Chemical mapping of a 177-nucleotide RNA with 2A3 and DMS.
RNA sequence: GGGAACGACUCGAGUAGAGUCGAAAAGAUAUGGAUACUGCGUUAACAACAGCAGUUGGUCGGAAACGACCACGGCUGACAUGUUGACCAGUAUCCUAAGUCAAAUCUGUACCUUCGGGUACAGAAAGAUGGAGGAGAACUUCGGUUCUCCUCCAUCAAAAGAAACAACAACAACAAC
Reactivity to 2A3 in 0.01 (KOAc 150mM, MgCl2 10mM, bicine 150mM(pH8.5), 24C), signal-to-noise 2, nucleotides 027 to 126: g010a020u090a020u140g000g000a000u010a020c010u000g110c080g060u000u010a000a000c100a070a160c010a020g040c020a020g100u240u260g030g000u000c000g040g040a030a030a050c010g010a000c000c000a020c000g040g000c000u010g030a170c100a300u300g000u010u010g010a000c010c000a000g000u030a000u040c000c010u000a000a000g010u000c010a030a000a180u010c000u000g000u000a000c010c000u000u070c300g160g000g000u000a010c000a010g000a000a040a010
Reactivity to DMS in 0.01 (KOAc 150mM, MgCl2 10mM, bicine 150mM(pH8.5), 24C), signal-to-noise 1, nucleotides 027 to 126: g020a040u000a300u020g000g020a020u000a000c000u000g040c300g040u000u000a010a000c000a070a240c010a010g010c000a020g010u020u010g030g020u000c020g000g020a110a090a210c000g000a000c010c000a000c010g000g000c000u030g000a130c250a200u000g010u000u000g020a000c020c000a020g010u000a000u000c000c000u000a010a020g000u000c040a080a140a120u000c000u000g000u000a000c000c000u000u050c090g050g010g000u000a010c000a010g000a010a040a050
Reactivities are given for positions 27 through 126.
The RNA was probed in 150 mM KOAc, 10 mM MgCl2 and 150 mM bicine (pH 8.5) at 24 C.
2A3 is a SHAPE reagent: it acylates the 2'-hydroxyl of flexible nucleotides of all four kinds.
It was measured as part of the RMDB library TTRDES.